[RMDB]
RNA sequence: GGGAACGACUCGAGUAGAGUCGAAAACGGGAUCGCGCCUCCCAGAUUGGCCCCCAGAACCAGAGCGACAACAAGGCCACCAGACAGAAGGCCGGUCGUAGCCAAUGACAGAAUGAGGACGACCGCGAAUACGCUAUAGGUUCGCCUAUAGCGUAUUAAAAGAAACAACAACAACAAC
Reactivity to 2A3 in 0.01 (KOAc 150mM, MgCl2 10mM, bicine 150mM(pH8.5), 24C), signal-to-noise 9, nucleotides 027 to 126: c020g010g010g030a070u100c040g010c020g020c070c000u020c020c010c000a030g040a100u090u140g050g000c010c000c000c010c010a030g040a050a020c040c010a020g020a020g100c020g070a060c000a160a010c020a080a060g030g020c010c020a050c020c000a080g110a170c030a060g120a200a070g090g000c030c000g000g000u000c020g000u020a020g040c000c010a040a050u100g030a050c070a090g200a130a090u150g020a100g040g000a010c010g000a010c000c010g030c010g040
Reactivity to DMS in 0.01 (KOAc 150mM, MgCl2 10mM, bicine 150mM(pH8.5), 24C), signal-to-noise 9, nucleotides 027 to 126: c070g000g000g000a050u000c040g010c080g000c020c020u000c020c040c030a090g010a080u010u010g000g000c010c000c010c030c020a100g010a070a110c120c060a060g010a090g010c010g020a060c070a100a090c140a100a080g000g000c020c020a090c090c060a100g010a130c110a110g020a130a120g000g000c040c010g010g000u010c000g010u000a060g010c020c020a060a050u010g010a130c160a100g020a110a060u020g000a120g010g000a060c020g000a040c010c010g020c100g010

About this RNA: Structure probing data (2A3 and DMS) for a 177-nucleotide construct. For 2A3, 11,346 sequencing reads were counted. The DMS profile rests on 25,025 reads. High 2A3 reactivity points to a flexible backbone, as in loops and unpaired stretches. It was measured as part of the RMDB library OK1LIB. The RNA was probed in 150 mM KOAc, 10 mM MgCl2 and 150 mM bicine (pH 8.5) at 24 C.